[RMDB]
RNA sequence: GGGAACGACUCGAGUAGAGUCGAAAAUGAGAAUCCCUGGGGCUGAGCCGGUGACGACCCCUCGCGGACAGCGGGCUUCCAAAGGCUGGCGAGACGCCACCACUCGUCCAGGAGCCCUCAAGGAGGCCAACCGCGAUGUAUUCGUACAUCGCGGUUGAAAAGAAACAACAACAACAAC
Reactivity to DMS in 0.01 (KOAc 150mM, MgCl2 10mM, bicine 150mM(pH8.5), 24C), signal-to-noise 1, nucleotides 027 to 126: u000g010a050g000a200a150u020c000c000c020u050g000g000g010g020c030u010g000a080g060c140c100g050g000u000g000a050c050g000a240c090c160c080c010u000c030g050c030g010g030a170c040a030g010c300g000g030g000c140u000u000c050c050a070a300a170g000g000c020u000g010g010c010g040a010g030a150c070g000c030c000a000c010c000a150c020u000c030g000u020c010c060a030g000g010a020g010c140c030c020u000c090a160a110g000g000a070g000g000c120
Chemical mapping of a 177-nucleotide RNA with DMS. DMS adducts were read by reverse transcription with MarathonRT. The data come from the RNA Mapping Database (RMDB), library OK2TRN.